Structure probing data (2A3 and DMS) for a 177-nucleotide construct. Reactivities are given for positions 27 through 126. The RNA was probed in 150 mM KOAc, 10 mM MgCl2 and 150 mM bicine (pH 8.5) at 24 C. The 2A3 profile rests on 1,278 reads. High 2A3 reactivity points to a flexible backbone, as in loops and unpaired stretches. It was measured as part of the RMDB library M2PK50. 2A3 adducts were read by reverse transcription with SuperScript II with manganese.
RNA sequence: GGGAACGACUCGAGUAGAGUCGAAAAAGACUUGUAUUCGUACAAGUCUACAGAAAUUUCGCUAGCACACGAUCACACCUAGCGUUGUCAAUAACGAUCGAACAACGUGUCAAUUCGUUGACACGAAGUUGUGACGAGCAUUCGUGCUCGUCACAACAAAAGAAACAACAACAACAAC
Reactivity to 2A3 in 0.01 (KOAc 150mM, MgCl2 10mM, bicine 150mM(pH8.5), 24C), signal-to-noise 2, nucleotides 027 to 126: a000g000a000c000u000u020g010u040a070u030u130c300g010u020a000c000a000a000g000u000c000u010a020c000a020g160a020a050a020u070u110u080c010g000c020u020a010g000c080a050c020a030c200g000a020u010c020a050c020a040c070c060u010a010g000c000g020u020u040g270u090c070a080a050u180a170a090c080g050a040u000c030g090a020a010c040a050a040c030g000u000g000u010c000a000a030u040u090c220g100u020u020g000a010c000a000c000g000a020a010
Reactivity to DMS in 0.01 (KOAc 150mM, MgCl2 10mM, bicine 150mM(pH8.5), 24C), signal-to-noise 1, nucleotides 027 to 126: a000g030a020c000u000u020g020u000a010u000u030c160g050u000a010c000a000a000g030u000c000u000a060c220a160g020a100a130a130u000u000u000c030g020c020u000a000g010c230a100c200a080c020g000a010u000c030a150c150a080c150c020u000a020g050c010g000u000u000g050u000c160a110a040u000a030a140c130g020a010u000c030g000a130a030c060a030a170c000g040u000g000u000c000a000a100u020u000c180g010u000u000g010a000c000a030c070g020a000a100